Chemical mapping of a 177-nucleotide RNA with 2A3 and DMS. The data come from the RNA Mapping Database (RMDB), library OK2TRN.
RNA sequence: GGGAACGACUCGAGUAGAGUCGAAAACAUGGGCCUGAUGGCGAGGUCCCCAAGGACAAGGAAGGAGGCGUGUUUGACCUGGGGCCCUUCAUUGUAGGUGAGUGAGACAGGGGCUUCGACCUGGCCACUCGAGAUACUAGUUCGCUAGUAUCUCGAGAAAAGAAACAACAACAACAAC
Reactivity to 2A3 in 0.01 (KOAc 150mM, MgCl2 10mM, bicine 150mM(pH8.5), 24C), signal-to-noise 6, nucleotides 027 to 126: c020a070u120g070g000g020c020c020u140g100a140u180g030g000c010g010a010g000g010u070c000c000c010c010a080a120g110g010a020c020a030a010g040g010a010a020g020g040a060g040g080c050g020u100g080u050u100u160g060a040c000c010u030g000g000g060g000c010c010c010u020u020c020a040u010u050g020u040a050g010g160u130g140a110g060u170g030a060g020a030c020a030g000g000g010g000c000u020u020c030g120a230c010c000u010g010g010c000c000a020
Reactivity to DMS in 0.01 (KOAc 150mM, MgCl2 10mM, bicine 150mM(pH8.5), 24C), signal-to-noise 7, nucleotides 027 to 126: c040a070u000g010g010g010c010c010u010g000a110u010g010g010c030g000a020g000g010u000c000c010c020c050a110a190g010g010a060c030a030a040g000g010a050a040g000g010a080g020g010c060g010u000g010u000u000u010g010a130c020c010u000g010g000g010g010c060c010c010u000u000c020a040u000u000g010u000a070g010g010u010g010a100g020u010g010a130g010a110c100a120g000g010g010g000c030u000u000c020g000a150c020c010u000g000g010c020c010a190
2A3 adducts were read by reverse transcription with SuperScript II with manganese.